[RMDB]
RNA sequence: GGGAACGACUCGAGUAGAGUCGAAAAAACAUGGCGAGGCCCGUGAAAGCACCUAUUUCCUGAGUGUGAACCGCAACAAACGCAGCGUGCUGCUCGACCUGCGCCGCGAGGAAGACGUGGAGGCGGCGUAGUGAGUGAUUUUCGAAUCACUCACUACAAAAGAAACAACAACAACAAC
Reactivity to DMS in 0.01 (KOAc 150mM, MgCl2 10mM, bicine 150mM(pH8.5), 24C), signal-to-noise 9, nucleotides 027 to 126: a070a070c100a060u010g010g010c030g010a090g010g010c060c030c040g030u000g010a070a100a120g000c030a050c020c030u000a090u010u010u000c030c020u000g000a090g010u010g020u000g010a080a100c060c030g000c060a080a070c110a050a080a130c120g010c060a050g010c080g020u000g010c030u000g000c040u000c040g010a100c060c020u000g010c030g010c020c020g020c040g010a070g010g000a100a070g000a080c070g020u000g000g010a110g010g010c030g000g010c090
Reactivity to 2A3 in 0.01 (KOAc 150mM, MgCl2 10mM, bicine 150mM(pH8.5), 24C), signal-to-noise 6, nucleotides 027 to 126: a000a000c050a040u030g040g000c020g040a070g030g040c040c030c010g030u050g090a150a090a010g030c000a030c020c020u040a110u040u070u040c010c020u060g040a050g050u060g020u030g060a060a050c020c030g030c040a020a050c030a070a190a010c050g010c030a030g020c010g090u070g020c030u040g020c000u010c020g100a100c010c010u050g000c010g000c020c020g010c010g000a050g070g040a080a030g070a040c030g030u060g020g050a050g020g040c030g000g020c040
Structure probing data (DMS and 2A3) for a 177-nucleotide construct.
Source: RMDB library OK2TST, as collected in RNAgym.
Values are in units of 0.01, from 0 to 300, in steps of 10.
The RNA was probed in 150 mM KOAc, 10 mM MgCl2 and 150 mM bicine (pH 8.5) at 24 C.
2A3 adducts were read by reverse transcription with SuperScript II with manganese.